[RMDB]
RNA sequence: GGGAACGACUCGAGUAGAGUCGAAAACUGAGCCUCGAUUCAAUUAAACCUAGCGUUGGAGAACGCAAAUAUGUCAGCAUCUAACUUCACCGUCGAUCAGAUCGAAGAGCGAUUCGGCUUUCGACCAUCUCAACGGAUCAUUCGUGAUCCGUUGAGAAAAAGAAACAACAACAACAAC
Reactivity to 2A3 in 0.01 (KOAc 150mM, MgCl2 10mM, bicine 150mM(pH8.5), 24C), signal-to-noise 2, nucleotides 027 to 126: c040u030g020a000g080c000c040u040c050g100a100u230u070c050a100a100u070u180a170a130a100c020c060u030a030g000c020g000u000u040g090g040a060g030a080a010c000g000c000a000a080a080u190a040u180g110u040c010a000g000c010a050u000c060u090a040a080c030u020u040c050a010c100c010g060u020c010g020a070u030c010a010g030a110u060c000g030a060a010g000a020g070c020g070a050u070u000c100g020g010c000u040u040u020c020g040a040c030c010a100
Reactivity to DMS in 0.01 (KOAc 150mM, MgCl2 10mM, bicine 150mM(pH8.5), 24C), signal-to-noise 2, nucleotides 027 to 126: c050u010g020a080g010c030c040u000c070g010a080u010u000c080a090a080u010u010a040a090a170c080c060u000a130g000c020g030u000u010g010g000a100g000a060a030c030g000c030a070a100a090u010a050u010g000u000c050a030g000c070a090u000c050u010a060a100c040u000u010c040a030c030c040g010u000c060g010a070u010c110a050g010a150u000c030g000a010a050g010a040g000c060g000a100u000u010c060g010g000c040u000u010u000c020g000a070c050c090a110